Source: RMDB library TTRDEL, as collected in RNAgym.
This 177-nucleotide RNA was probed chemically with 2A3 and DMS.
The 2A3 profile rests on 13,070 reads.
Reactivities are given for positions 27 through 126.
The reactions ran in a buffer of 150 mM KOAc, 10 mM MgCl2 and 150 mM bicine (pH 8.5), at 24 C.

RNA sequence: GGGAACGACUCGAGUAGAGUCGAAAAGAUAUGGACGAGAGAGGCUAGCAUGAUGACCUCGCUCGGAAACGAGCGAGCAAGUGCAGCCUGGAAUGUCCUAAGUCAAAGCUACAGUUCGCUGUAGCAACCAUCGUAACUAGUUCGCUAGUUACGAUGGAAAAGAAACAACAACAACAAC
Reactivity to 2A3 in 0.01 (KOAc 150mM, MgCl2 10mM, bicine 150mM(pH8.5), 24C), signal-to-noise 5, nucleotides 027 to 126: g020a010u080a060u140g020g000a010c030g010a030g030a030g010a000g290g000c010u070a110g000c110a020u080g140a300u090g010a220c020c000u000c010g000c000u000c000g020g000a020a060a000c000g000a000g000c010g010a000g000c000a160a070g010u010g000c010a000g000c000c000u000g010g060a080a020u110g000u010c000c000u000a120a010g040u030c080a130a020a040g010c000u010a010c010a020g060u040u120c220g100c130u020g000u010a000g000c000a000a010
Reactivity to DMS in 0.01 (KOAc 150mM, MgCl2 10mM, bicine 150mM(pH8.5), 24C), signal-to-noise 5, nucleotides 027 to 126: g000a050u000a300u010g000g010a010c000g020a160g010a300g000a010g010g010c000u000a130g020c000a020u000g010a060u010g000a070c300c000u000c000g010c000u010c020g010g000a040a040a130c000g000a010g010c010g010a010g000c010a010a050g020u000g000c010a050g000c010c000u020g000g020a280a130u000g000u000c000c000u000a020a090g000u000c010a080a060a110g010c010u000a000c010a010g010u010u020c270g010c010u000g000u000a010g010c000a060a070